[RMDB]
RNA sequence: GGGAACGACUCGAGUAGAGUCGAAAAGAGCUUACUGCUGCAAACACUAAGGCGACGUAGAUGCGAUCUACGAUUAGUAGCUCAAAUUACAAAUAAAGUCAUGAAAUGGAAAUUAGCGUGUUUGUGGCUAUGGUAUGCACUUCGGUGCAUACCAUAGAAAAGAAACAACAACAACAAC
Reactivity to DMS in 0.01 (KOAc 150mM, MgCl2 10mM, bicine 150mM(pH8.5), 24C), signal-to-noise 4, nucleotides 027 to 126: g010a060g010c040u010u010a050c090u000g000c020u000g020c010a010a010a000c010a010c000u010a120a140g010g010c030g010a130c010g000u000a010g020a050u010g020c260g010a160u000c000u000a010c010g000a130u000u000a040g010u000a030g000c020u000c020a070a070a110u010u010a080c120a050a050a110u000a060a090a140g020u000c030a080u010g000a060a080a080u000g010g020a080a090a080u000u010a080g030c110g000u000g010u000u000u000g010u000g010g000
Reactivity to 2A3 in 0.01 (KOAc 150mM, MgCl2 10mM, bicine 150mM(pH8.5), 24C), signal-to-noise 3, nucleotides 027 to 126: g000a020g020c030u120u190a020c060u150g030c000u020g010c030a010a020a000c010a020c020u100a130a060g050g030c020g000a060c020g050u020a010g010a070u090g220c090g050a030u000c000u000a000c000g030a080u140u160a040g010u030a000g000c000u010c010a030a020a000u070u030a010c030a000a090a040u100a090a130a010g040u060c050a060u160g150a120a090a030u140g050g100a080a120a080u100u080a100g080c050g070u000g000u010u010u020g030u020g000g000
Structure probing data (DMS and 2A3) for a 177-nucleotide construct. DMS adducts were read by reverse transcription with MarathonRT. For 2A3 the reverse transcriptase was SuperScript II with manganese. Conditions: 150 mM KOAc, 10 mM MgCl2 and 150 mM bicine (pH 8.5), 24 C. The DMS profile rests on 2,972 reads. It was measured as part of the RMDB library OK2TST. Values cover nucleotides 27 to 126.